This 177-nucleotide RNA was probed chemically with 2A3 and DMS.
RNA sequence: GGGAACGACUCGAGUAGAGUCGAAAACUCCAGUUCAACAGCAACAACCUGCUGCCGCAUAUGAGGACAUUCCUGCAUUGGAGGAAUCAGAUGACGACGGUGAUGAAGAUGGGGGUGCAGGAUUCCACCUAUUUGACCGUUUCGACGGUCAAAUAGGAAAAGAAACAACAACAACAAC
Reactivity to 2A3 in 0.01 (KOAc 150mM, MgCl2 10mM, bicine 150mM(pH8.5), 24C), signal-to-noise 8, nucleotides 027 to 126: c010u010c010c010a020g030u120u130c080a110a090c010a080g050c010a020a060c020a040a090c090c030u030g010c010u030g050c030c030g100c040a040u100a060u220g080a090g020g010a020c020a100u050u040c010c010u040g070c020a060u040u150g100g030a060g040g030a030a030u070c020a030g080a140u120g050a070c070g010a020c030g040g060u110g040a130u090g040a030a070g060a090u090g020g010g000g000g020u020g000c010a000g030g010a010u010u000c000c010a050
Reactivity to DMS in 0.01 (KOAc 150mM, MgCl2 10mM, bicine 150mM(pH8.5), 24C), signal-to-noise 4, nucleotides 027 to 126: c080u000c010c010a110g040u010u000c050a110a190c110a070g020c040a070a070c170a150a070c140c010u000g000c020u000g010c020c040g000c090a050u040a050u000g010a050g030g020a170c220a140u020u010c030c010u000g000c120a110u030u030g000g000a060g000g030a120a040u010c050a060g040a060u000g020a060c050g000a070c100g020g000u000g000a060u020g010a050a090g010a090u040g000g000g000g010g020u010g010c060a030g010g000a170u040u000c040c030a170
The 2A3 profile rests on 7,631 reads.
It was measured as part of the RMDB library OK1LIB.
2A3 adducts were read by reverse transcription with SuperScript II with manganese.
For DMS the reverse transcriptase was MarathonRT.